[RMDB]
RNA sequence: GGGAACGACUCGAGUAGAGUCGAAAAGCUCUGUAAUGGGAUGGGAUCCGAAGCCCCAUUGAGGGAUAAUACAGGCUCUCCCAUCCAACUCCUAUUCCAACACGUCCUCGUCGUACAGAGUGGUGACUAAGGUAUAGCUCCUUCGGGAGCUAUACAACCGAUAGGAUACGUUCGCGUAUCCUAUCGGAAAAGAAACAACAACAACAAC
Reactivity to 2A3 in 0.01 (KOAc 150mM, MgCl2 10mM, bicine 150mM(pH8.5), 24C), signal-to-noise 3, nucleotides 027 to 156: g000c000u000c030u050g070u080a120a110u160g120g000g000a000u010g000g000g000a010u170c020c010g040a070a010g030c030c000c010c040a140u100u240g050a300g030g020g040a040u090a170a060u180a170c120a060g010g000c000u000c000u000c000c010c000a000u000c010c010a000a000c020u030c020c010u040a140u040u070c050c040a080a030c030a070c130g080u080c020c060u120c040g130u010c030g020u000a010c020a020g000a030g000u030g000g040u030g020a020c040u090a050a020g050g000u000a000u000a000g000c000u010c000c000u020u010c050g100g000g000a000g000c000u000a000u000a000c000a000a010
Reactivity to DMS in 0.01 (KOAc 150mM, MgCl2 10mM, bicine 150mM(pH8.5), 24C), signal-to-noise 2, nucleotides 027 to 156: g010c000u010c030u000g010u020a000a090u000g030g000g020a010u010g010g030g050a060u000c060c070g000a250a190g000c010c000c010c000a300u000u000g030a170g030g010g000a060u000a110a180u000a150c060a210g040g000c020u000c030u000c010c020c000a030u000c000c020a050a020c050u000c030c030u000a140u000u010c070c040a060a140c040a050c050g010u010c010c000u000c030g040u000c080g020u000a070c020a050g000a070g040u000g020g020u010g010a140c050u010a080a050g030g000u000a010u000a020g000c010u000c000c010u000u000c300g040g010g010a030g030c010u000a000u000a010c000a090a070